[RMDB]
RNA sequence: GGGAACGACUCGAGUAGAGUCGAAAAGAUAUGGAACUGUGGACAUGCUAUGCAGUCGGAAACGACUGGACAUAGCAACAGCCAUUUCCUAAGUCAAAACAUGACAUACCUUCGGGUAUGUCAUGAACGAACUGGAUACGUUCGCGUAUCCAGUUCGAAAAGAAACAACAACAACAAC
Reactivity to 2A3 in 0.01 (KOAc 150mM, MgCl2 10mM, bicine 150mM(pH8.5), 24C), signal-to-noise 2, nucleotides 027 to 126: g000a030u090a030u110g050g020a240a290c040u040g000u040g090g090a100c110a240u140g000c000u000a000u000g020c010a010g040u000c000g020g040a040a050a030c020g000a010c000u010g000g040a020c000a000u010a000g000c000a000a000c000a000g020c000c010a010u000u020u030c000c000u050a180a060g110u080c110a040a040a070a140c000a020u000g000a010c000a010u010a010c000c000u020u060c300g030g000g010u000a000u030g000u000c030a000u000g000a000a020
Reactivity to DMS in 0.01 (KOAc 150mM, MgCl2 10mM, bicine 150mM(pH8.5), 24C), signal-to-noise 3, nucleotides 027 to 126: g010a010u020a130u010g000g010a040a090c230u010g000u000g030g000a180c300a160u000g010c020u000a010u000g000c000a000g010u000c030g030g010a090a130a210c020g030a010c000u000g020g000a120c000a000u000a000g020c020a060a030c120a070g000c010c000a030u000u010u000c000c010u000a070a120g000u000c160a060a060a090a130c010a010u000g000a000c000a010u000a000c000c000u000u000c230g020g010g000u000a000u000g000u000c020a000u010g000a050a110
Structure probing data (2A3 and DMS) for a 177-nucleotide construct.
For 2A3, 3,050 sequencing reads were counted.
The reactions ran in a buffer of 150 mM KOAc, 10 mM MgCl2 and 150 mM bicine (pH 8.5), at 24 C.
It was measured as part of the RMDB library TTRDEL.